Chemical mapping of a 177-nucleotide RNA with DMS and 2A3. For 2A3 the reverse transcriptase was SuperScript II with manganese. DMS adducts were read by reverse transcription with MarathonRT. For 2A3, 3,170 sequencing reads were counted.
[RMDB]
RNA sequence: GGGAACGACUCGAGUAGAGUCGAAAAGAUAUGGACUUAUGAUCCAUAUUCUUCUAUGAAGUCGGAAACGAUGGAGAAGAUAUGGGUUUGUAAGUCCUAAGUCAAAACACCACCUUCGGGUGGUGAAGUACACGGUAGAGUUCGCUCUACCGUGUACAAAAGAAACAACAACAACAAC
Reactivity to DMS in 0.01 (KOAc 150mM, MgCl2 10mM, bicine 150mM(pH8.5), 24C), signal-to-noise 2, nucleotides 027 to 126: g010a050u010a300u000g000g040a030c000u000u000a000u000g000a020u010c000c000a010u000a000u010u000c000u000u000c000u000a300u010g000a110a190g030u010c000g000g000a150a130a220c000g000a030u000g000g000a000g010a010a010g010a010u000a000u000g010g020g010u000u000u020g030u000a000a000g000u010c000c000u000a030a070g000u020c020a080a100a060a230c000a000c010c000a000c010c000u000u000c280g030g000g020u000g010g010u000g000a000a040
Reactivity to 2A3 in 0.01 (KOAc 150mM, MgCl2 10mM, bicine 150mM(pH8.5), 24C), signal-to-noise 2, nucleotides 027 to 126: g010a010u080a060u180g010g020a020c000u040u010a000u040g020a000u000c010c020a000u000a000u050u040c000u010u000c020u030a300u100g020a040a010g010u020c000g000g060a110a070a130c010g020a040u060g010g020a030g000a020a020g010a010u010a000u010g030g000g060u090u260u250g010u020a010a030g000u000c000c000u000a050a000g020u000c020a000a040a000a170c000a000c010c020a000c000c020u050u050c270g090g010g000u020g000g000u000g000a000a000